This 177-nucleotide RNA was probed chemically with 2A3 and DMS. Source: RMDB library TTRDEL, as collected in RNAgym. For 2A3, 4,958 sequencing reads were counted. The RNA was probed in 150 mM KOAc, 10 mM MgCl2 and 150 mM bicine (pH 8.5) at 24 C. For DMS the reverse transcriptase was MarathonRT. 2A3 adducts were read by reverse transcription with SuperScript II with manganese. Values cover nucleotides 27 to 126.

RNA sequence: GGGAACGACUCGAGUAGAGUCGAAAAGAUAUGGACGUAGUGCAGAGCUGCUCGGAAACGAGACAGCGACGAAGCACACGUCCUAAGUCAAAAGUCCUUACACAAUCUUCGGAUUGUGUAAGGACAACCCAAUCUUGAUCUUCGGAUCAAGAUUGGGAAAAGAAACAACAACAACAAC
Reactivity to 2A3 in 0.01 (KOAc 150mM, MgCl2 10mM, bicine 150mM(pH8.5), 24C), signal-to-noise 3, nucleotides 027 to 126: g030a020u050a050u130g010g010a000c010g000u060a080g010u300g020c010a020g020a000g070c000u000g000c000u000c020g010g080a030a040a020c010g010a030g270a230c010a000g030c020g020a070c020g030a070a030g010c000a000c000a010c020g010u020c000c000u010a030a010g070u020c020a040a050a080a110g000u000c000c000u000u000a010c020a010c000a010a010u000c010u070u150c300g110g010a010u010u010g000u000g000u000a000a000g000g000a000c000a000a000
Reactivity to DMS in 0.01 (KOAc 150mM, MgCl2 10mM, bicine 150mM(pH8.5), 24C), signal-to-noise 2, nucleotides 027 to 126: g000a030u000a300u000g010g000a010c000g010u000a110g060u000g070c000a050g010a210g020c000u000g000c010u000c000g020g000a040a070a220c000g000a010g020a160c000a000g040c000g010a090c250g000a120a140g000c020a000c010a020c000g020u000c010c000u000a010a080g000u000c010a070a090a100a130g030u000c000c000u000u000a010c000a010c010a010a000u000c000u000u050c170g010g000a030u000u000g020u000g020u000a000a000g000g000a010c000a000a010